[RMDB]
This 177-nucleotide RNA was probed chemically with 2A3 and DMS. The DMS profile rests on 3,255 reads. The data come from the RNA Mapping Database (RMDB), library OK2TST. The RNA was probed in 150 mM KOAc, 10 mM MgCl2 and 150 mM bicine (pH 8.5) at 24 C.
RNA sequence: GGGAACGACUCGAGUAGAGUCGAAAAAUCAUGGUCCUUGCGGAUCGGAUCAUCCAUAUAAUAUACAAAAGGAAACUCUAGAUAUUUGAUAUCUUUCUCUUUGAAUGAGAUCUCAAUUCCAGCGACGAUCACUAUGUUUGUUCGCAAACAUAGUGAUAAAAGAAACAACAACAACAAC
Reactivity to 2A3 in 0.01 (KOAc 150mM, MgCl2 10mM, bicine 150mM(pH8.5), 24C), signal-to-noise 4, nucleotides 027 to 126: a000u090c060a050u080g020g000u010c010c000u020u110g060c120g050g010a020u010c010g000g000a030u020c040a030u000c020c030a030u120a010u030a190a120u110a040u050a140c030a040a160a040a020g000g030a110a140a050c060u100c050u130a070g020a090u030a120u140u170u150g040a030u040a030u100c000u000u110u000c040u000c000u080u110u170g100a130a090u120g010a030g020a050u000c020u010c040a030a080u060u030c030c010a020g060c020g100a060c040g030
Reactivity to DMS in 0.01 (KOAc 150mM, MgCl2 10mM, bicine 150mM(pH8.5), 24C), signal-to-noise 4, nucleotides 027 to 126: a060u000c040a060u010g040g020u000c000c010u000u020g010c300g020g010a040u000c080g010g000a040u000c050a120u010c020c030a110u020a090u010a120a110u010a120u010a110c070a060a060a090a110g010g000a090a090a080c140u000c090u020a100g010a030u000a020u000u000u010g000a050u000a040u000c040u000u000u000c040u000c070u010u000u010g000a090a080u010g000a040g010a040u000c030u010c050a050a110u010u000c020c020a080g010c100g020a090c150g000